[RMDB]
RNA sequence: GGGAACGACUCGAGUAGAGUCGAAAAAAGUCGGGUACAGUGAGGCCGACGCGGCGAGGAUGACCAGUCUCGCGGAGAGUCUCAUCCGGAUGCUCGAGGGGGUCGCCAAGCGUGUCAAGAUGGGUUAUACUGUCGUUAUGUUCGCAUAACGACAGUAAAAAGAAACAACAACAACAAC
Reactivity to 2A3 in 0.01 (KOAc 150mM, MgCl2 10mM, bicine 150mM(pH8.5), 24C), signal-to-noise 1, nucleotides 027 to 126: a020a000g120u110c040g030g000g000u110a140c090a080g040u010g090a040g000g050c030c010g000a060c040g000c010g100g040c030g040a020g050g110a060u130g070a080c030c000a040g150u020c020u010c040g070c030g020g010a080g000a030g040u000c030u000c040a070u040c020c030g090g000a150u150g050c020u060c050g000a020g030g010g000g000g000u050c000g000c060c000a000a010g040c020g030u040g050u080c060a050a000g040a060u060g000g000g060u010u040a070
Reactivity to DMS in 0.01 (KOAc 150mM, MgCl2 10mM, bicine 150mM(pH8.5), 24C), signal-to-noise 4, nucleotides 027 to 126: a050a080g010u000c030g000g010g020u000a070c120a110g010u020g020a090g020g010c030c040g010a170c040g010c040g010g010c010g000a200g010g000a060u010g000a090c090c080a130g010u000c020u000c010g020c040g000g020a110g000a130g000u000c050u010c050a060u010c040c060g000g020a110u000g000c080u010c040g010a090g010g010g000g000g000u000c060g000c020c020a070a180g000c040g000u000g000u000c040a070a110g010a080u000g000g000g000u000u000a160

An RNA of 177 nucleotides, treated with 2A3 and DMS and read out base by base. The reactions ran in a buffer of 150 mM KOAc, 10 mM MgCl2 and 150 mM bicine (pH 8.5), at 24 C. 2A3 adducts were read by reverse transcription with SuperScript II with manganese.